Structure probing data (2A3 and DMS) for a 177-nucleotide construct. For 2A3 the reverse transcriptase was SuperScript II with manganese. The data come from the RNA Mapping Database (RMDB), library M2PK90. Conditions: 150 mM KOAc, 10 mM MgCl2 and 150 mM bicine (pH 8.5), 24 C.

RNA sequence: GGGAACGACUCGAGUAGAGUCGAAAAUUUACGGGCCCGCGAGGAGGACCGAAUACACGCGCGCGAGGUCCUCCAGGUAGUACGAACGCGCGCGUGAAUAAUAGUACUACCACCCGGGCCCACCGAACGUAUUCCUAAUAUUCGUAUUAGGAAUACGAAAAGAAACAACAACAACAAC
Reactivity to 2A3 in 0.01 (KOAc 150mM, MgCl2 10mM, bicine 150mM(pH8.5), 24C), signal-to-noise 3, nucleotides 027 to 126: u040u030u110a070c030g000g000g000c010c020c000g050c090g020a090g000g000a000g000g010a000c000c020g050a050a070u250a090c070a010c060g010c000g010c000g010c010g020a050g010g000u000c000c000u010c000c000a000g000g020u000a000g000u000a000c020g020a150a020c040g010c000g010c000g000c000g020u020g020a010a020u190a050a030u040a010g000u000a000c000u010a010c010c000a030c010c030c010g010g010g000c030c000c000a000c010c010g020a060a020
Reactivity to DMS in 0.01 (KOAc 150mM, MgCl2 10mM, bicine 150mM(pH8.5), 24C), signal-to-noise 4, nucleotides 027 to 126: u010u000u000a120c090g000g020g010c020c010c010g050c270g010a170g010g010a010g010g000a010c010c010g000a090a110u010a130c080a100c040g000c020g000c020g010c020g000a120g000g010u000c000c000u000c000c040a020g030g010u000a010g010u000a000c010g010a140a120c070g000c010g000c010g030c010g020u000g000a070a070u010a090a080u010a130g020u000a010c010u000a010c010c000a300c150c220c020g000g000g000c000c010c000a010c020c030g010a110a190